[RMDB]
RNA sequence: GGGAACGACUCGAGUAGAGUCGAAAACCUCCAAGCCUGAAUACUCUCCUGUGACCGAUAGCGCACAAGUACCGUGAGGGAAAGGUGAAAAGCACCCCGGGAGGGGAGUGAAACAGUACCUGAAACCACACAGAUUAUACUUCGGUAUAAUCUGUGUAAAAGAAACAACAACAACAAC
Reactivity to DMS in 0.01 (KOAc 150mM, MgCl2 10mM, bicine 150mM(pH8.5), 24C), signal-to-noise 7, nucleotides 027 to 126: c020c010u010c120c040a080a110g020c240c010u000g000a070a100u020a070c050u000c000u000c020c020u000g020u030g010a130c030c040g000a080u020a120g010c010g000c010a040c040a040a040g010u000a120c020c020g030u040g010a230g000g000g010a070a120a110g000g010u010g000a030a040a100a230g020c020a080c110c090c050c010g020g020g020a060g020g010g000g010a020g020u000g000a110a050a120c060a030g000u020a070c090c050u000g020a090a080a150c150c120
Reactivity to 2A3 in 0.01 (KOAc 150mM, MgCl2 10mM, bicine 150mM(pH8.5), 24C), signal-to-noise 8, nucleotides 027 to 126: c000c000u040c040c010a060a020g070c020c000u030g030a030a020u090a130c000u020c000u030c010c010u070g080u120g140a090c020c000g060a060u070a050g030c040g010c020a020c020a100a010g010u010a030c010c030g050u060g080a140g010g010g030a030a050a040g220g010u030g010a030a060a000a010g020c010a030c010c020c020c010g010g010g020a040g010g010g000g000a010g010u040g030a070a050a000c010a010g050u050a050c010c020u060g030a070a040a020c080c010